[RMDB]
RNA sequence: GGGAACGACUCGAGUAGAGUCGAAAAAAAAGGGGAAUGAAAGAUGGGCACGAUCGUUUGUCAAGACUGCAAUGAAACCAUUCAGCAUUUUGAAGAUGAGAAAGUGACGAUACUUUACGGAACGUGCAUAUGGACAACUCUUCGGAGUUGUCCAUAUAAAAGAAACAACAACAACAAC
Reactivity to DMS in 0.01 (KOAc 150mM, MgCl2 10mM, bicine 150mM(pH8.5), 24C), signal-to-noise 3, nucleotides 027 to 126: a000a040a030a050g010g000g000g010a120a060u020g000a050a060a040g010a080u010g010g000g000c010a020c040g000a110u000c010g020u000u010u020g000u000c040a020a060g020a040c050u020g000c100a080a050u020g000a140a110a070c210c070a060u010u000c070a040g020c080a070u000u010u020u000g010a050a050g000a060u030g000a080g020a030a030a070g000u010g000a040c100g000a080u000a030c050u020u000u000a100c070g000g000a040a080c100g030u000g030c080
Reactivity to 2A3 in 0.01 (KOAc 150mM, MgCl2 10mM, bicine 150mM(pH8.5), 24C), signal-to-noise 2, nucleotides 027 to 126: a000a000a000a020g100g010g000g000a030a010u090g030a060a060a050g200a060u150g020g010g080c000a010c020g090a030u040c030g090u060u040u120g060u070c000a000a050g000a010c000u020g050c090a000a020u080g060a060a000a080c070c000a030u010u000c010a010g000c040a090u050u040u030u080g060a070a050g040a050u100g100a020g020a030a020a120g040u050g000a060c060g000a020u060a110c060u040u040u080a020c040g020g050a050a020c010g020u000g000c020

Structure probing data (DMS and 2A3) for a 177-nucleotide construct. For 2A3 the reverse transcriptase was SuperScript II with manganese. Source: RMDB libraries RFM100 and RFMREP, as collected in RNAgym.